[RMDB]
RNA sequence: GGGAACGACUCGAGUAGAGUCGAAAAGAUAUGGACCUUGUGAUUCAUGUGCUCGCGAUAAGAAGAAUCAUCGGAAACGAUGAUACCUUCUUUUGACGCGAGGCAUGAAUCACAAGGUCCUAAGUCAGAUAUACCUACCCUUCGGGGUAGGUAUAUCAAAAGAAACAACAACAACAAC
Reactivity to DMS in 0.01 (KOAc 150mM, MgCl2 10mM, bicine 150mM(pH8.5), 24C), signal-to-noise 2, nucleotides 027 to 126: g000a060u010a300u020g000g010a000c000c010u000u010g010u020g010a000u000u010c000a000u010g020u010g020c010u010c000g020c000g040a210u010a000a010g010a040a000g030a230a030u000c010a010u000c000g010g000a120a100a300c010g010a020u000g000a010u000a030c180c000u000u000c000u000u000u000u000g000a240c030g000c000g020a000g000g000c000a000u000g000a010a010u000c000a000c000a010a000g010g000u000c010c000u000a000a040g010u010c000a160